[RMDB]
Overview: This 177-nucleotide RNA was probed chemically with DMS and 2A3. For DMS, 836 sequencing reads were counted. For 2A3 the reverse transcriptase was SuperScript II with manganese. In probing experiments dimethyl sulfate is read out at A N1 and C N3, which are open when not base-paired. DMS adducts were read by reverse transcription with MarathonRT. Reactivities are given for positions 27 through 126.
RNA sequence: GGGAACGACUCGAGUAGAGUCGAAAAGUGAGGAGUGAUCCAGCUUGGGCUGACGAGAGGCUCCGGAGCCUUCACGUUCAGUGCUUUUUACCUGCCAAUCAAACUGCUACAAGACAACACCCUGAUCGUCUCUUACUUUGUUCGCAAAGUAAGAGACAAAAGAAACAACAACAACAAC
Reactivity to DMS in 0.01 (KOAc 150mM, MgCl2 10mM, bicine 150mM(pH8.5), 24C), signal-to-noise 2, nucleotides 027 to 126: g020u000g020a090g000g000a070g010u000g000a170u000c050c040a200g010c080u000u000g010g000g030c040u020g000a070c070g000a300g010a070g010g010c000u010c170c270g010g000a100g020c020c000u030u010c030a120c020g010u010u020c080a020g050u000g000c040u030u000u020u000u030a120c050c010u010g000c070c080a070a050u020c060a050a110a050c100u000g010c000u010a040c110a060a070g010a030c120a050a060c070a040c020c010c040u010g000a190u010c100
Reactivity to 2A3 in 0.01 (KOAc 150mM, MgCl2 10mM, bicine 150mM(pH8.5), 24C), signal-to-noise 1, nucleotides 027 to 126: g080u050g040a050g030g020a020g030u060g010a020u010c050c060a020g030c020u070u050g070g070g000c000u010g000a010c030g040a020g000a010g110g050c040u030c030c140g110g020a010g010c000c000u040u110c060a040c090g040u100u070c020a000g000u060g140c030u160u090u000u050u120a090c010c010u000g010c030c030a040a050u070c020a060a070a070c040u050g040c000u060a020c050a010a110g010a010c020a080a020c000a090c010c010c000u020g040a090u060c070
Source: RMDB library RFMREP, as collected in RNAgym.